[RMDB]
RNA sequence: GGGAACGACUCGAGUAGAGUCGAAAACUUGCUGUUCAAUCGCGUCAGCGGGGUUGAACAGGACUUUUACCGUUGACUGGGCUCAUCAUCCGGAAGUGUUCGUCCUAGCCGGAGGGCCAAGCAGAGAUCUUUGCGCGAACUGCGCACGGAGAAGCCCCUGAUACACAGAGUUCGCUCUGUGUAUCAGAAAAGAAACAACAACAACAAC
Reactivity to DMS in 0.01 (KOAc 150mM, MgCl2 10mM, bicine 150mM(pH8.5), 24C), signal-to-noise 1, nucleotides 027 to 156: c010u000u010g000c000u000g000u000u000c020a000a010u000c020g000c020g030u010c050a030g030c000g030g000g000g020u000u000g010a030a020c020a050g000g000a070c060u000u000u000u000a030c020c010g020u000u010g000a050c000u000g010g010g040c000u000c010a090u020c040a110u000c040c000g010g030a300a080g040u000g020u000u020c100g000u000c050c040u000a190g010c020c000g000g000a100g010g000g000c010c040a030a010g030c060a080g010a130g000a060u000c010u000u000u000g070c020g010c020g000a070a130c090u000g040c040g020c070a040c030g040g000a060g030a120a080g020c040c000c050
Reactivity to 2A3 in 0.01 (KOAc 150mM, MgCl2 10mM, bicine 150mM(pH8.5), 24C), signal-to-noise 3, nucleotides 027 to 156: c020u060u300g010c000u000g010u010u000c000a000a000u000c000g000c010g020u000c000a010g000c010g000g000g000g000u000u000g000a000a010c000a000g020g010a000c010u200u240u180u300a060c000c000g000u000u000g000a000c010u000g020g000g010c000u000c050a090u020c010a060u000c100c000g010g010a050a000g030u050g020u230u080c080g060u110c030c020u040a040g020c010c020g040g030a040g000g010g000c010c020a010a000g040c060a010g040a030g010a110u010c040u030u140u090g040c060g000c020g060a150a070c070u120g020c050g020c020a010c050g060g020a050g020a080a090g040c010c000c000
Chemical mapping of a 207-nucleotide RNA with DMS and 2A3. For 2A3, 3,233 sequencing reads were counted. The reactions ran in a buffer of 150 mM KOAc, 10 mM MgCl2 and 150 mM bicine (pH 8.5), at 24 C.